An RNA of 207 nucleotides, treated with DMS and 2A3 and read out base by base. 2A3 adducts were read by reverse transcription with SuperScript II with manganese. The RNA was probed in 150 mM KOAc, 10 mM MgCl2 and 150 mM bicine (pH 8.5) at 24 C. For 2A3, 8,642 sequencing reads were counted.
RNA sequence: GGGAACGACUCGAGUAGAGUCGAAAACGCUGGGCUGUUAAGCGACCAUAGGGAGCUGAAGCGCGCACGGCGAAGAACUAUGAAGUCGCCAUACAGCCUGUGCUGAAGCGCGCACGGCAACCGAAAGGUGCGAAACAUCUGCUGUUCGCAGCAGAUGGUAAUGCAAGUACUUCGGUACUUGCAUUACAAAAGAAACAACAACAACAAC
Reactivity to DMS in 0.01 (KOAc 150mM, MgCl2 10mM, bicine 150mM(pH8.5), 24C), signal-to-noise 2, nucleotides 027 to 156: c060g020c050u000g010g020g060c010u000g000u000u000a130a140g000c020g000a030c000c030a060u000a050g020g000g010a200g040c000u010g010a050a070g020c000g060c010g010c020a300c050g020g010c010g020a090a100g000a090a240c000u000a010u010g010a140a190g040u000c010g060c000c070a220u010a030c000a030g020c000c010u000g010u000g000c030u000g040a090a060g030c040g050c000g000c000a220c060g010g030c010a090a270c020c020g010a080a120a190g010g000u000g030c060g000a180a100a300c000a030u000c010u000g020c000u000g020u000u000c300g020c010a040g000c000a020g010a000u000g010
Reactivity to 2A3 in 0.01 (KOAc 150mM, MgCl2 10mM, bicine 150mM(pH8.5), 24C), signal-to-noise 6, nucleotides 027 to 156: c030g000c020u050g020g010g000c000u010g040u080u090a300a090g010c020g010a010c010c000a000u010a010g010g020g000a030g010c010u020g030a190a020g030c020g000c000g000c020a030c000g010g000c000g060a150a020g010a020a010c030u030a010u060g090a280a080g010u010c000g000c030c040a060u090a110c010a000g000c000c000u020g000u010g000c020u090g020a120a050g010c010g000c000g010c000a010c020g060g000c060a090a070c010c010g030a070a020a020g030g000u030g020c020g040a110a060a020c010a010u000c000u010g010c010u020g050u140u100c270g020c120a000g000c000a000g000a010u020g010